[RMDB]
RNA sequence: GGGAACGACUCGAGUAGAGUCGAAAACUGCCGCCGGGACGCAGUGAUGCUCGCAGGGUCGCACGGUCGCCUCGGGUCGGCCUCGUGUCGGCUCGACCUGCGAGGGGAGCGAGUGGCGAGCCCGACCAAAACUUUCUCGCCUUCGGGCGAGAAAGAACUUUUUAUAGACGUUCGCGUCUAUAAAAAGAAAAGAAACAACAACAACAAC
Reactivity to 2A3 in 0.01 (KOAc 150mM, MgCl2 10mM, bicine 150mM(pH8.5), 24C), signal-to-noise 1, nucleotides 027 to 156: c020u030g040c030c020g000c030c010g040g000g110a060c030g000c020a060g170u020g080a040u090g040c010u000c010g000c010a020g070g010g110u150c030g070c050a070c050g000g090u040c030g030c040c090u070c050g000g000g020u000c000g020g020c000c000u060c140g280u300g050u040c020g010g000c040u010c020g030a020c000c000u010g010c000g010a000g040g030g020g020a000g020c000g000a060g080u060g020g000c000g030a060g060c000c040c000g030a050c010c010a070a090a000a020c000u000u000u000c000u000c020g020c030c030u030u060c180g060g010g000c010g000a000g000a000a000a000g000a000a000
This 207-nucleotide RNA was probed chemically with 2A3.
Source: RMDB library M2RFPK, as collected in RNAgym.